[RMDB]
Background
This 207-nucleotide RNA was probed chemically with 2A3. The reactions ran in a buffer of 150 mM KOAc, 10 mM MgCl2 and 150 mM bicine (pH 8.5), at 24 C.
RNA sequence: GGGAACGACUCGAGUAGAGUCGAAAACGGACCGUUACACCGCGUCAAUCCAUGGACGAAGGUUGGCGUCGUCGGUGCACUCGUCCUCGCCGUCACGGUGUUCGACCGCCUUGCACUCUUGGCCGGACUAUACGGAGCCAUACUGGUGAUCUAUGGACUUAUCUCGAACCUUCGGGUUCGAGAUAAGAAAAGAAACAACAACAACAAC
Reactivity to 2A3 in 0.01 (KOAc 150mM, MgCl2 10mM, bicine 150mM(pH8.5), 24C), signal-to-noise 1, nucleotides 027 to 156: c070g070g000a030c070c000g040u040u070a070c120a020c030c050g050c020g080u020c000a030a020u000c010c060a100u160g120g000a050c080g040a150a120g060g000u000u000g020g000c020g010u030c030g010u040c010g080g010u050g000c010a000c060u030c080g030u000c030c000u030c050g010c010c000g110u080c010a010c160g020g000u070g030u000u020c020g030a010c020c000g000c040c020u030u110g050c050a050c110u040c000u150u090g060g010c000c000g050g030a070c070u060a050u000a170c000g130g020a070g060c010c000a060u120a070c060u170g000g110u050g080a040u130c070u140a110u130g000g000a020
Source information:
For 2A3, 702 sequencing reads were counted.